[RMDB]
RNA sequence: GGGAACGACUCGAGUAGAGUCGAAAAGUGACCCUAGACAUCCCUUUUAAGCUAUGAUUCGGGCGAACUGAUUCAUAGUAAAAUCUACAAAGGGGGGCCGAAGAAGCAAACCGGAAAAGUGGCAGUUCUCAACUGAUUUGUUCGCAAAUCAGUUGAGAAAAGAAACAACAACAACAAC
Reactivity to 2A3 in 0.01 (KOAc 150mM, MgCl2 10mM, bicine 150mM(pH8.5), 24C), signal-to-noise 1, nucleotides 027 to 126: g040u050g050a100c020c000c010u020a030g020a030c020a010u000c000c000c000u030u000u000u070a060a020g000c000u000a000u000g000a000u030u000c000g040g000g000c080g170a240a060c010u010g000a030u000u050c000a000u020a000g000u020a000a000a000a050u000c010u000a010c100a020a000a010g000g020g000g000g000g010c000c000g020a120a080g000a040a000g120c030a080a000a030c000c040g010g020a150a000a000a030g070u040g010g010c040a030g110u030u030
An RNA of 177 nucleotides, treated with 2A3 and read out base by base. The RNA was probed in 150 mM KOAc, 10 mM MgCl2 and 150 mM bicine (pH 8.5) at 24 C. Source: RMDB library RFM100, as collected in RNAgym. The 2A3 profile rests on 743 reads.